Structure probing data (2A3 and DMS) for a 177-nucleotide construct. The DMS profile rests on 4,213 reads. The data come from the RNA Mapping Database (RMDB), library TTRDES. For 2A3 the reverse transcriptase was SuperScript II with manganese. Conditions: 150 mM KOAc, 10 mM MgCl2 and 150 mM bicine (pH 8.5), 24 C. Reactivities are given for positions 27 through 126. DMS (dimethyl sulfate) methylates the pairing face of unpaired adenines and cytosines.
RNA sequence: GGGAACGACUCGAGUAGAGUCGAAAAGAUAUGGAACCGUGUAGCUUUUGACGCUCCUGUAUCGGAAACGAUAUCUAAGGAGCGAUAAGCUAGACGGUUCCUAAGUCAAAACGCAUGUUCGCAUGCGGCAUAAAUGCCAGUUCGCUGGCAUUUAUGCAAAAGAAACAACAACAACAAC
Reactivity to 2A3 in 0.01 (KOAc 150mM, MgCl2 10mM, bicine 150mM(pH8.5), 24C), signal-to-noise 3, nucleotides 027 to 126: g010a010u070a010u200g010g000a020a000c010c000g010u080g200u030a010g000c020u180u070u130u280g270a130c040g000c000u000c010c000u030g000u010a010u010c000g040g040a030a040a030c020g000a000u020a020u080c140u190a120a080g000g020a010g000c000g000a000u010a010a000g010c000u010a000g090a030c010g000g000u000u010c000c000u000a010a000g000u020c010a000a010a100a100c030g000c000a000u000g020u080u120c250g000c140a000u000g000c010g000
Reactivity to DMS in 0.01 (KOAc 150mM, MgCl2 10mM, bicine 150mM(pH8.5), 24C), signal-to-noise 4, nucleotides 027 to 126: g000a040u000a300u000g000g010a000a000c000c000g040u000g000u000a010g010c000u000u000u000u000g020a280c060g020c000u000c000c000u000g000u010a000u010c000g010g000a120a100a230c010g000a020u000a020u000c230u010a170a040g010g020a000g020c010g020a020u000a000a010g000c000u000a020g000a010c020g010g010u000u000c000c000u000a010a080g020u000c040a100a070a110a250c010g000c000a010u000g000u000u020c240g020c010a030u000g000c020g030